This 177-nucleotide RNA was probed chemically with 2A3 and DMS. The reactions ran in a buffer of 150 mM KOAc, 10 mM MgCl2 and 150 mM bicine (pH 8.5), at 24 C. For 2A3, 6,950 sequencing reads were counted. 2A3 adducts were read by reverse transcription with SuperScript II with manganese. DMS adducts were read by reverse transcription with MarathonRT.

[RMDB]
RNA sequence: GGGAACGACUCGAGUAGAGUCGAAAACGUCGGCGAUAGCAGGUGCCUCGGAGACGCCCAUCUCGAACGGAUCGGGAAGCAGGUCGAUCACUUGCUCGAGAGAACCGGUUUCCAGGUCGAACCGCCAGUGGAUAAUCAGUUUCGACUGAUUAUCCACAAAAGAAACAACAACAACAAC
Reactivity to 2A3 in 0.01 (KOAc 150mM, MgCl2 10mM, bicine 150mM(pH8.5), 24C), signal-to-noise 7, nucleotides 027 to 126: c100g140u120c070g010g010c000g050a060u090a110g110c100a070g030g090u070g040c000c010u030c090g010g000a010g000a010c010g010c010c020c000a030u020c010u010c020g030a070a050c050g050g030a020u020c030g030g040g040a150a060g110c090a070g060g240u060c010g000a030u010c030a060c260u080u200g020c010u000c020g020a030g000a000g020a050a020c060c020g050g000u010u020u000c000c000a000g000g010u020c020g030a040a030c030c000g020c020c000a010
Reactivity to DMS in 0.01 (KOAc 150mM, MgCl2 10mM, bicine 150mM(pH8.5), 24C), signal-to-noise 1, nucleotides 027 to 126: c160g000u000c110g010g030c000g000a120u000a020g000c130a000g030g000u080g030c020c010u000c130g000g000a010g000a010c000g000c000c000c020a090u010c030u010c000g000a040a130c070g000g020a010u000c020g020g010g000a030a020g000c060a100g000g000u000c000g030a010u000c030a010c180u050u070g000c080u000c010g020a070g000a000g010a010a070c060c190g020g000u000u010u000c000c000a030g000g000u000c010g020a080a040c140c000g020c000c050a150